[RMDB]
An RNA of 170 nucleotides, treated with 2A3 and DMS and read out base by base. The data come from the RNA Mapping Database (RMDB), library 15KLIB. For 2A3 the reverse transcriptase was SuperScript II with manganese. For 2A3, 11,200 sequencing reads were counted.
RNA sequence: GGGAACGACUCGAGUAGAGUCGAAAAUAAGGGCGGUGAUUCAACUGACUUCAUAGCCCUCAUUAUGGCUUAUGGCAAUUGCACAUUUGGUGCUCCAGAUGAUGCCUCUCGGUUACUUCAUACCGUGCUAGGCGAGAGUUCGCUCUCGCCAAAAGAAACAACAACAACAAC
Reactivity to 2A3 in 0.01 (KOAc 150mM, MgCl2 10mM, bicine 150mM(pH8.5), 24C), signal-to-noise 6, nucleotides 027 to 129: u140a020a000g000g010g010c000g020g020u020g020a010u050u030c000a100a150c170u230g050a020c020u040u010c020a010u000a020g000c000c010c000u010c000a030u020u080a140u180g010g000c020u050u050a020u060g020g000c070a070a170u170u130g020c000a000c010a090u070u060u210g140g000u100g010c020u010c010c010a020g020a050u100g040a060u150g030c000c000u020c000u000c010g000g020u000u070a060c020u120u080c060a060u050a090c000c000g020u050g010c050u070a010
Reactivity to DMS in 0.01 (KOAc 150mM, MgCl2 10mM, bicine 150mM(pH8.5), 24C), signal-to-noise 3, nucleotides 027 to 129: u040a060a060g030g020g030c030g000g000u010g020a030u030u020c090a230a160c040u090g000a060c170u000u000c000a010u020a200g020c000c000c050u000c060a000u030u030a130u060g010g020c000u040u010a040u070g000g000c160a090a120u060u080g070c030a000c010a130u010u090u050g070g010u040g030c160u060c000c000a030g040a030u070g020a110u000g030c020c080u020c070u020c020g010g080u050u060a070c180u080u050c150a040u050a040c030c050g000u000g030c110u000a030